Overview
Chemical mapping of a 177-nucleotide RNA with DMS and 2A3. The data come from the RNA Mapping Database (RMDB), libraries RFM100 and RFMREP. 2A3 adducts were read by reverse transcription with SuperScript II with manganese. Conditions: 150 mM KOAc, 10 mM MgCl2 and 150 mM bicine (pH 8.5), 24 C. For DMS the reverse transcriptase was MarathonRT.

RNA sequence: GGGAACGACUCGAGUAGAGUCGAAAAGAAAGAAAGAAAGAAGUGGUGGCUUGGUGGUCGUAUGCAUGACGUCAUUUACUUCGAUGAUUGGAGUGACAUCAUAUGUACGGCUGCUAAACUGCUACAAUCAGGUUCAGAAGUUCGCUUCUGAACCUGAAAAAGAAACAACAACAACAAC
Reactivity to DMS in 0.01 (KOAc 150mM, MgCl2 10mM, bicine 150mM(pH8.5), 24C), signal-to-noise 1, nucleotides 027 to 126: g000a150a120a100g030a060a100a060g000a200a080a080g020a120a070g020u010g000g010u010g000g000c080u030u000g000g020u010g020g030u000c000g020u000a000u000g000c070a010u010g040a020c070g010u020c000a090u000u000u060a110c010u020u000c000g050a170u010g000a100u040u000g010g000a090g000u000g000a030c020a110u000c000a000u000a000u000g020u000a000c000g000g000c000u000g010c000u000a000a040a050c000u020g000c050u000a000c040a070a120
Reactivity to 2A3 in 0.01 (KOAc 150mM, MgCl2 10mM, bicine 150mM(pH8.5), 24C), signal-to-noise 5, nucleotides 027 to 126: g070a020a070a000g130a040a070a010g100a030a130a000g130a150a040g000u000g010g000u010g000g000c010u000u010g000g000u010g000g010u010c000g000u000a000u010g010c010a000u010g000a000c010g040u000c010a030u050u050u110a270c040u050u080c080g300a300u260g050a110u090u160g030g000a010g000u000g000a000c000a010u000c000a000u010a000u020g010u010a000c000g000g000c010u000g000c000u010a000a000a000c000u010g010c000u000a010c000a000a040